The record gives the reactivity of an RNA of 207 nucleotides to 2A3. 2A3 adducts were read by reverse transcription with SuperScript II with manganese.
RNA sequence: GGGAACGACUCGAGUAGAGUCGAAAACAGGAUAUAUUGAUUUAUUUUCUAAAAGAAACAUGAAAACAUAAAAAUUUCAAGGUCUAAAAAUAGUGUACAUUAUUGUGAUGGUAACUGAACUUAUCAGAAGUCAACUUAUCCUUGUUGACUUAUCCUAAGGAUUUAAAAUGUUCGCAUUUUAAAUCCUAAAAGAAACAACAACAACAAC
Reactivity to 2A3 in 0.01 (KOAc 150mM, MgCl2 10mM, bicine 150mM(pH8.5), 24C), signal-to-noise 1, nucleotides 027 to 156: c000a000g020g000a020u020a000u020a010u110u010g030a090u100u110u130a110u090u150u090u030c080u130a120a160a070a190g000a040a020a040c090a030u070g030a090a090a030a000c040a010u200a080a240a090a050a080u090u100u100c020a000a020g040g030u000c020u100a000a150a000a000a150u110a050g030u110g100u090a030c030a020u050u300a040u130u180g120u110g040a080u000g020g020u080a000a000c000u050g050a060a020c020u140u070a120u080c000a000g030a110a000g020u030c000a000a020c010u050u000a020u060c000c000u020u070g060u020u050g040a020c020u060u060a020u000c020c000u020a080